RNA sequence: GGGAACGACUCGAGUAGAGUCGAAAAGAUAUGGACUGGCAGAGGGAGCUCGUGUCGGAAACGACAUCAAGAGCGAGGAUCUCUGCAGUCCUAAGUCAAAAGUGGAUCACCUUCGGGUGAUCCACAACCUUACACCGUACUUCGGUACGGUGUAAGGAAAAGAAACAACAACAACAAC
Reactivity to DMS in 0.01 (KOAc 150mM, MgCl2 10mM, bicine 150mM(pH8.5), 24C), signal-to-noise 2, nucleotides 027 to 126: g010a000u000a160u010g000g010a020c000u000g010g030c000a020g000a020g000g000g000a090g010c020u000c010g000u000g000u000c000g020g000a010a040a110c010g000a020c000a010u010c300a190a180g000a020g040c000g030a130g020g000a110u010c010u000c000u000g000c000a010g000u000c000c000u000a000a060g000u000c030a090a080a180a220g000u000g010g010a000u000c020a000c000c000u000u010c260g050g000g020u000g010a010u010c010c000a000c010a020a060
Reactivity to 2A3 in 0.01 (KOAc 150mM, MgCl2 10mM, bicine 150mM(pH8.5), 24C), signal-to-noise 2, nucleotides 027 to 126: g030a000u050a040u130g000g000a000c000u070g260g240c010a010g000a000g010g050g000a040g010c000u000c010g040u020g000u000c000g000g000a040a020a000c000g010a000c010a020u150c230a300a130g000a000g000c020g080a180g000g070a080u000c010u000c000u000g020c000a010g000u000c000c010u010a010a020g020u000c030a030a060a100a090g000u000g000g000a010u000c000a020c030c010u060u120c300g130g000g000u000g030a000u010c000c000a000c000a010a000
Conditions: 150 mM KOAc, 10 mM MgCl2 and 150 mM bicine (pH 8.5), 24 C.
The record gives the reactivity of an RNA of 177 nucleotides to DMS and 2A3.
The DMS profile rests on 1,951 reads.
The 2A3 profile rests on 4,595 reads.
The data come from the RNA Mapping Database (RMDB), library TTRDES.
DMS (dimethyl sulfate) methylates the pairing face of unpaired adenines and cytosines.
Values cover nucleotides 27 to 126.